[RMDB]
RNA sequence: GGGAACGACUCGAGUAGAGUCGAAAAAUCCUCAGGUUCAUAAGCGUGAUGAUUGGGUGUUCAUGCUCCAUGCAUGACAUGUGCCUCCUUUGAACCUUGUUACGACCUUGGCACAUUACCAAUCUGAAAAAGACGUUCGCGUUCGCGCGAACGUCAACAAACUAGACUUGUUCGCAAGUCUAGUUUGAAAAGAAACAACAACAACAAC
Reactivity to DMS in 0.01 (KOAc 150mM, MgCl2 10mM, bicine 150mM(pH8.5), 24C), signal-to-noise 2, nucleotides 027 to 156: a100u000c010c000u000c080a040g020g020u010u000c000a030u010a070a090g010c110g060u000g010a120u000g000a050u000u000g020g000g000u000g010u000u020c010a020u010g020c010u000c180c220a140u000g040c010a030u000g000a020c020a030u000g010u000g010c000c000u010c120c040u000u000u000g010a040a020c030c020u010u000g030u000u000a230c180g000a130c120c110u000u000g010g060c020a030c030a060u000u000a070c030c000a020a030u000c010u000g010a060a070a110a120a110g020a040c020g030u000u010c000g010c020g030u000u010c300g000c030g060c000g000a010a010c000g010u000c000a020a050
Reactivity to 2A3 in 0.01 (KOAc 150mM, MgCl2 10mM, bicine 150mM(pH8.5), 24C), signal-to-noise 5, nucleotides 027 to 156: a000u020c000c000u020c010a010g010g010u010u000c010a020u050a300a040g020c110g110u090g140a110u060g000a010u070u000g020g020g000u070g030u120u070c000a000u010g000c000u090c230c070a180u300g010c000a000u000g000a000c000a010u000g000u000g000c000c000u030c020c010u000u020u020g000a000a010c000c000u010u080g060u040u070a120c120g050a110c030c040u060u070g000g000c000a000c000a010u020u080a030c000c000a000a000u000c000u030g040a070a090a000a000a020g000a000c000g000u000u010c000g000c000g040u040u050c220g010c010g000c000g110a010a000c000g000u000c000a000a000